[RMDB]
RNA sequence: GGGAACGACUCGAGUAGAGUCGAAAAGAUAUGGAAAUGGUUGUCUUUUGACGGCUUUCGGAAACGAAAAGCCGAUAAGACAUCAUUUCCUAAGUCAAAGCCUCCCUUACUUCGGUAAGGGAGGCAACCAUCACUGCUAGUUCGCUAGCAGUGAUGGAAAAGAAACAACAACAACAAC
Reactivity to 2A3 in 0.01 (KOAc 150mM, MgCl2 10mM, bicine 150mM(pH8.5), 24C), signal-to-noise 2, nucleotides 027 to 126: g010a010u060a030u090g010g030a000a000a010u010g070g110u190u270g030u040c020u060u250u130u240g220a120c000g000g010c020u010u000u020c000g010g020a080a050a040c010g030a150a030a040a090g000c000c000g000a020u070a040a020g000a000c000a000u000c000a010u010u010u020c000c000u000a080a010g020u000c040a120a100a030g000c010c000u010c000c010c000u000u000a000c010u020u090c300g090g010u000a000a000g010g000g020a010g000g000c000a010a000
Reactivity to DMS in 0.01 (KOAc 150mM, MgCl2 10mM, bicine 150mM(pH8.5), 24C), signal-to-noise 1, nucleotides 027 to 126: g010a040u010a300u000g000g010a000a020a020u000g010g000u010u010g030u000c000u000u010u010u000g020a250c080g030g000c000u000u000u000c010g000g000a150a090a170c000g000a000a010a030a040g000c000c000g020a060u000a020a020g020a000c000a020u000c000a000u000u010u000c000c000u000a020a090g010u020c010a120a090a130g020c000c000u000c000c000c000u000u000a000c000u000u000c230g030g000u000a010a030g000g020g000a000g000g000c000a000a010